[RMDB]
RNA sequence: GGGAACGACUCGAGUAGAGUCGAAAAAAGCGCAAAACAACAUGUUGCGCAUGAACUCGCUAGCCUUCACCGUGACUUUCGGUACCGUCGUCUCAUACCGAACAUACUCUUUUUCAAAUGCAAACUCAUUACCACACUCUGAUAAUUUGCGAGAUACUAAUCGCAACUGAUUCGUCAGUUGCGAUUAAAAAGAAACAACAACAACAAC
Reactivity to DMS in 0.01 (KOAc 150mM, MgCl2 10mM, bicine 150mM(pH8.5), 24C), signal-to-noise 2, nucleotides 027 to 156: a050a040g030c000g060c000a000a040a050a080c060a070a090c070a300u020g000u000u000g020c000g020c030a090u030g020a100a060c020u020c030g020c060u000a050g000c010c020u000u000c060a030c040c050g010u000g010a050c080u000u000u010c010g030g030u000a020c050c030g010u000c030g030u000c050u000c040a150u010a100c000c000g010a070a040c130a220u010a140c080u010c020u000u000u000u020u000c060a050a090a090u000g020c060a030a070a080c050u000c070a060u000u010a030c000c020a070c050a070c110u000c010u000g000a030u010a010a060u000u000u000g010c040g000a130g000a250u010a120c070
Reactivity to 2A3 in 0.01 (KOAc 150mM, MgCl2 10mM, bicine 150mM(pH8.5), 24C), signal-to-noise 6, nucleotides 027 to 156: a000a000g070c070g010c040a100a110a060a070c100a100a050c040a130u190g030u060u000g020c000g010c010a010u070g040a040a040c020u010c050g010c040u030a030g020c010c000u070u050c040a040c060c040g060u060g110a110c060u040u110u070c040g020g000u020a060c010c070g110u100c030g030u010c010u010c070a010u060a070c010c030g060a040a010c020a030u160a070c020u050c090u090u100u040u080u150c130a080a120a040u160g010c020a030a030a030c030u060c050a050u000u080a080c030c040a030c010a030c050u060c030u040g020a050u040a140a080u040u080u100g030c010g010a020g010a040u070a080c050